RNA sequence: GGGAACGACUCGAGUAGAGUCGAAAAGAACCGGAGCCUGCAAGACCUACCCGGCGUCCUAAAUUGGUGCCUGCUAUCCUGAGACGCCCGACAUCACCUGUGUCUAGAGAAUGCAAUAGUAGUACGGCCGUCUUUAGAAAUUCGUUUCUAAAGACGGAAAAGAAACAACAACAACAAC
Reactivity to DMS in 0.01 (KOAc 150mM, MgCl2 10mM, bicine 150mM(pH8.5), 24C), signal-to-noise 3, nucleotides 027 to 126: g010a120a110c040c030g010g000a090g000c050c030u000g010c100a090a100g010a060c040c020u000a110c050c040c030g010g000c040g010u000c020c020u000a040a070a130u010u010g010g020u010g010c040c020u000g020c060u010a070u010c020c020u000g000a180g010a110c100g010c030c030c090g020a070c050a060u000c050a090c040c030u000g010u000g010u010c030u000a070g010a100g000a110a070u000g000c040a050a030u010a070g000u000a060g010u000a090c110g000g010
Reactivity to 2A3 in 0.01 (KOAc 150mM, MgCl2 10mM, bicine 150mM(pH8.5), 24C), signal-to-noise 2, nucleotides 027 to 126: g000a050a000c030c000g040g020a030g040c020c020u040g010c050a050a000g020a080c000c000u030a040c020c040c000g020g000c030g000u010c010c020u080a140a120a110u140u120g030g000u030g030c020c000u000g010c030u040a040u080c010c000u040g000a030g020a080c030g040c030c030c020g030a020c020a050u070c000a050c050c050u080g000u020g030u060c010u040a050g020a010g030a220a050u080g040c010a010a050u040a060g050u010a000g040u020a020c050g100g010